[RMDB]
RNA sequence: GGGAACGACUCGAGUAGAGUCGAAAAAUGCUGUUCGCAGCAUGGUUCGGGGUCGAAGUUGCUCUCGCAGAUAAUGGAACUACUCCUGAAGCCUCCACGGGAGCCAUUGUAGAGAGCCACUUCGACGGAGGCACCCUUACUGGACCUUCGGGUCCAAUGUGCAUAGUCAGUUCGCUGACUAUGCACAAAAAGAAACAACAACAACAAC
Reactivity to 2A3 in 0.01 (KOAc 150mM, MgCl2 10mM, bicine 150mM(pH8.5), 24C), signal-to-noise 1, nucleotides 027 to 156: a000u020g000c010u010g040u060u090c170g030c220a010g000c000a020u030g060g050u080u160c070g000g000g000g000u040c000g000a000a000g000u000u000g010c000u000c020u010c000g060c250a030g000a140u000a010a000u000g000g000a070a040c050u110a060c000u300c000c000u020g000a020a000g000c000c000u000c010c000a010c040g010g000g000a000g000c000c000a000u000u010g060u150a020g000a000g000a000g010c000c000a000c000u010u000c010g000a020c000g000g000a000g000g050c020a020c030c020c000u020u020a080c090u050g030g010a000c000c000u010u080c260g110g000g010u030c000c010a010a060